[RMDB]
RNA sequence: GGGAACGACUCGAGUAGAGUCGAAAAAUCUUGGCGAAGUCAGCGCGGAAGGAGCGCGCAACUCCUUACCCUCGCCUUUUUUUUUCCGCUGCCGUUCGCGAAAGCGUUCAGCGGAAAAGGGACCAAACAAUAUUUGCCUGUUCGCAGGCAAAUAUUGAAAAGAAACAACAACAACAAC
Reactivity to DMS in 0.01 (KOAc 150mM, MgCl2 10mM, bicine 150mM(pH8.5), 24C), signal-to-noise 4, nucleotides 027 to 126: a040u010c060u000u000g000g020c030g010a030a100g020u010c160a130g000c120g020c290g020g000a040a010g000g010a020g000c010g030c270g000c200a080a110c010u000c010c010u000u000a120c050c000c040u000c020g000c000c000u000u000u000u000u000u000u000u000u000c000c000g010c020u000g010c300c150g010u000u000c000g010c070g010a080a110a150g000c000g000u000u000c000a000g000c000g010g000a000a000a010a040g010g010g010a190c070c050a080a060a160